[RMDB]
The record gives the reactivity of an RNA of 177 nucleotides to DMS and 2A3. For DMS, 2,925 sequencing reads were counted. DMS adducts were read by reverse transcription with MarathonRT. Values are in units of 0.01, from 0 to 300, in steps of 10. The data come from the RNA Mapping Database (RMDB), library TTRINS. For 2A3 the reverse transcriptase was SuperScript II with manganese.
RNA sequence: GGGAACGACUCGAGUAGAGUCGAAAAGAUAUGGAACGGAUAAAGCUUGGAUUUAGCGAAUGGGAGUCCCACAUCGGAAACGAUGUGAAGUCUCCCAUUCGCUUGUCAGCUUUACGUUCCUAAGUCAGUAUAAUAAGCCGUUCGCGGCUUAUUAUACAAAAGAAACAACAACAACAAC
Reactivity to DMS in 0.01 (KOAc 150mM, MgCl2 10mM, bicine 150mM(pH8.5), 24C), signal-to-noise 3, nucleotides 027 to 126: g000a040u010a300u000g000g010a020a020c000g010g000a250u010a030a020a010g010c000u000u020g050g010a030u000u000u000a010g020c000g010a010a000u000g000g000g010a040g000u000c040c100c000a030c000a010u000c000g000g000a140a120a290c000g010a030u000g010u000g000a090a300g010u000c010u000c000c010c000a000u000u000c000g030c000u010u000g010u000c000a030g000c000u000u000u000a040c020g010u000u000c000c000u000a020a080g000u000c050a140
Reactivity to 2A3 in 0.01 (KOAc 150mM, MgCl2 10mM, bicine 150mM(pH8.5), 24C), signal-to-noise 2, nucleotides 027 to 126: g020a020u080a040u230g010g000a000a020c040g070g140a260u120a170a030a000g010c050u230u300g220g000a090u300u300u270a020g000c040g000a000a000u010g000g010g000a010g000u000c040c040c000a000c010a010u000c000g000g030a070a050a110c000g000a000u000g000u000g010a020a030g010u010c000u000c000c020c000a020u000u000c000g000c000u000u000g000u000c010a000g000c000u000u020u010a000c000g020u000u000c000c000u000a100a000g060u000c060a000